[RMDB]
RNA sequence: GGGAACGACUCGAGUAGAGUCGAAAAGUACCGUGUUCGCACGGUACAAAGGGUGCAUUGCGGAGCGAGCUGAGAUCGUACAGCCCGUUCCAACAAUGUUCCGAAAACAGUUUCCUUCGGGAAACUGCCUCAAUCAAGUGUUCGCACUUGAUUGAGGAAAAGAAACAACAACAACAAC
Reactivity to 2A3 in 0.01 (KOAc 150mM, MgCl2 10mM, bicine 150mM(pH8.5), 24C), signal-to-noise 2, nucleotides 027 to 126: g000u010a000c000c000g000u000g030u020u060c210g020c110a000c020g000g000u010a000c000a000a010a000g100g000g010u010g010c000a000u020u020g010c060g020g010a010g010c020g000a010g000c010u030g010a020g030a300u220c130g130u230a060c020a000g010c000c000c000g000u010u000c010c000a010a000c010a010a000u000g000u050u010c010c010g020a060a030a010a060c000a000g000u000u010u000c020c000u020u070c190g070g000g020a000a000a020c000u030g050
Reactivity to DMS in 0.01 (KOAc 150mM, MgCl2 10mM, bicine 150mM(pH8.5), 24C), signal-to-noise 2, nucleotides 027 to 126: g000u000a000c020c010g060u000g000u010u030c240g020c020a010c000g000g000u000a010c000a030a120a080g000g010g010u000g010c000a000u000u000g030c300g000g000a040g010c000g020a030g000c000u000g030a130g000a160u020c300g020u000a140c000a020g000c000c010c000g000u000u000c000c010a030a090c050a020a000u000g000u000u000c000c020g000a090a060a040a300c000a000g010u000u000u000c000c000u000u010c150g030g020g010a000a000a020c000u000g000